[RMDB]
RNA sequence: GGGAACGACUCGAGUAGAGUCGAAAAUCUUGGGUGUUUUUGCAUGCGAUAGAAACGAUAGAAAAAGCCCCUACAAAUGUAGAGGAUAGGGACAAAGCCCCCCAUUUGUUGCUUUUAGCAGGGAUUCACUCUAAUGGGAGUUCGCUCCCAUUAGAGUAAAAGAAACAACAACAACAAC
Reactivity to DMS in 0.01 (KOAc 150mM, MgCl2 10mM, bicine 150mM(pH8.5), 24C), signal-to-noise 2, nucleotides 027 to 126: u000c030u000u000g000g000g030u000g010u000u000u000u000u000g030c050a070u000g020c070g000a120u010a050g010a060a060a090c070g010a080u000a090g010a060a030a140a080a220g000c010c000c050c020u000a010c030a120a100a100u010g000u010a040g010a070g010g000a080u010a050g000g010g010a040c060a040a060a220g010c060c010c000c010c010c000a100u000u000u000g010u000u000g000c040u000u010u000u010a100g000c050a060g000g000g030a180u000u000c100
Annotation: This 177-nucleotide RNA was probed chemically with DMS. The reactions ran in a buffer of 150 mM KOAc, 10 mM MgCl2 and 150 mM bicine (pH 8.5), at 24 C. The data come from the RNA Mapping Database (RMDB), library OK2TRN. Values are in units of 0.01, from 0 to 300, in steps of 10. Reactivities are given for positions 27 through 126.